Record summary: Conditions: 150 mM KOAc, 10 mM MgCl2 and 150 mM bicine (pH 8.5), 24 C. An RNA of 177 nucleotides, treated with 2A3 and DMS and read out base by base. For 2A3 the reverse transcriptase was SuperScript II with manganese. The 2A3 profile rests on 3,954 reads. It was measured as part of the RMDB library 15KREP. For DMS the reverse transcriptase was MarathonRT. For DMS, 1,853 sequencing reads were counted.

RNA sequence: GGGAACGACUCGAGUAGAGUCGAAAAGAACAGAAGUGUUGCAUGUGCAAUAGACGCGCUGCAGCGUACUCUUCACCUCUGCAAUCUUAUGCCUGCUGGACUCAUUCCUGCGGUUAUGAUUAUGUCUACUUUUUUCUAUGUUCGCAUAGAAAAAAGUAAAAGAAACAACAACAACAAC
Reactivity to 2A3 in 0.01 (KOAc 150mM, MgCl2 10mM, bicine 150mM(pH8.5), 24C), signal-to-noise 4, nucleotides 027 to 126: g030a080a000c030a040g080a120a010g070u020g010u090u000g000c010a030u170g010u000g000c030a000a060u060a120g070a070c040g010c010g030c100u170g010c060a040g000c000g000u080a150c010u010c020u010u020c000a020c020c000u000c020u030g020c010a030a020u030c020u040u070a050u140g010c000c000u070g020c010u030g010g010a000c020u050c190a090u180u030c000c000u010g010c010g010g050u070u060a050u080g060a040u040u140a060u210g060u010c020u010
Reactivity to DMS in 0.01 (KOAc 150mM, MgCl2 10mM, bicine 150mM(pH8.5), 24C), signal-to-noise 2, nucleotides 027 to 126: g000a130a140c080a030g000a050a060g020u000g040u000u000g000c010a020u010g040u020g000c220a070a110u010a070g010a090c100g010c010g020c130u010g000c140a100g000c010g000u000a080c060u000c070u000u000c030a070c030c010u000c040u010g000c050a030a030u000c040u000u000a070u000g000c060c010u000g050c050u010g000g010a050c160u030c170a130u010u000c000c000u000g000c090g000g000u000u000a030u000g000a050u000u000a100u010g000u000c060u000